[RMDB]
RNA sequence: GGGAACGACUCGAGUAGAGUCGAAAAGAUAUGGAGCUGUGCUCCUUGGAUUUAGAGCAAUACAGAUAAUAUAUCGGAAACGAUAUAAGAUCUGUAUUGCUCUUGUCAGGAGCCCAGCUCCUAAGUCGACCUCAUAUAACUUCGGUUAUAUGAGGUCAAAAGAAACAACAACAACAAC
Reactivity to DMS in 0.01 (KOAc 150mM, MgCl2 10mM, bicine 150mM(pH8.5), 24C), signal-to-noise 1, nucleotides 027 to 126: g000a090u000a300u000g000g010a030g050c000u000g010u000g010c000u000c000c000u010u020g030g010a020u000u000u000a000g000a000g010c000a000a000u000a010c000a010g010a020u000a040a040u000a010u000a010u000c000g000g000a200a180a230c000g010a030u000a010u010a030a070g010a020u000c000u000g000u000a000u010u000g000c010u000c000u000u000g000u000c000a020g000g000a010g010c010c050c010a000g000c000u000c020c000u000a010a090g030u010c150

Chemical mapping of a 177-nucleotide RNA with DMS.
It was measured as part of the RMDB library TTRINS.
For DMS the reverse transcriptase was MarathonRT.
The reactions ran in a buffer of 150 mM KOAc, 10 mM MgCl2 and 150 mM bicine (pH 8.5), at 24 C.